[RMDB]
Notes:
This 177-nucleotide RNA was probed chemically with 2A3 and DMS. For DMS, 1,893 sequencing reads were counted. For 2A3, 2,497 sequencing reads were counted. 2A3 adducts were read by reverse transcription with SuperScript II with manganese.
RNA sequence: GGGAACGACUCGAGUAGAGUCGAAAAAGGUACCGCUAGGUCUGUCAUGGUACCUCACUCUGUGUAGUGCUAGCUAGGUACGUACGUCAUCAGCGCGUACCUAGCGGUACGAGUCAUGACGAUCGAGACCCUGUAUCGACUUCGGUCGAUACAGGGUAAAAGAAACAACAACAACAAC
Reactivity to 2A3 in 0.01 (KOAc 150mM, MgCl2 10mM, bicine 150mM(pH8.5), 24C), signal-to-noise 2, nucleotides 027 to 126: a000g110g000u050a020c010c030g010c130u110a050g020g050u020c130u130g040u010c090a030u020g040g000u050a090c020c030u030c010a030c010u110c050u200g230u050g110u280a100g000u010g000c040u030a220g020c000u000a000g000g000u020a000c000g030u000a040c030g080u060c120a260u120c040a140g030c000g000c000g040u010a010c010c000u000a000g000c000g010g020u000a000c000g010a010g040u080c030a020u030g000a020c020g000a000u020c020g030a010g040
Reactivity to DMS in 0.01 (KOAc 150mM, MgCl2 10mM, bicine 150mM(pH8.5), 24C), signal-to-noise 2, nucleotides 027 to 126: a040g000g010u000a120c020c130g020c120u000a030g000g010u000c010u000g020u000c010a050u000g000g000u010a040c030c050u000c030a070c030u030c070u030g000u000g000u020a110g010u000g000c120u010a100g030c010u000a010g010g000u000a000c030g010u020a040c010g000u000c270a100u010c260a100g010c000g010c010g010u000a000c000c000u000a010g010c030g000g030u000a010c030g000a210g030u020c050a020u000g000a000c040g000a060u000c010g010a070g000